RNA sequence: GGGAACGACUCGAGUAGAGUCGAAAAGGAUGUUUCUUCGGAAACAUCCAAAAAUCCUAAGUCGCAUGAGGGGUAGCAGGGUAUCGGAAACGAUACGGCUGCUAUAAUCCUCCCCACCAUGCGAUAUGGAAAAAAGAGCGACCUUCGGGUCGCUCAACCUUCAUUCUAUGUUCGCAUAGAAUGAAGGAAAAGAAACAACAACAACAAC
Reactivity to 2A3 in 0.01 (KOAc 150mM, MgCl2 10mM, bicine 150mM(pH8.5), 24C), signal-to-noise 1, nucleotides 027 to 156: g000g000a000u000g010u030u010u040c020u030u060c200g000g000a000a000a020c000a000u010c000c000a010a000a000a000a000u050c050c000u090a170a010g010u000c000g000c000a000u000g050a060g000g000g010g060u030a000g000c000a000g060g040g000u020a000u000c000g040g040a110a060a030c000g020a000u010a000c010g080g090c020u010g000c000u010a010u060a000a000u010c030c040u170c010c010c010c000a150c020c000a010u000g000c000g000a000u000a060u040g000g060a090a020a030a130a050a060g010a000g000c010g000a000c000c020u060u070c290g110g000g000u010c000g020c020u000c000a000a000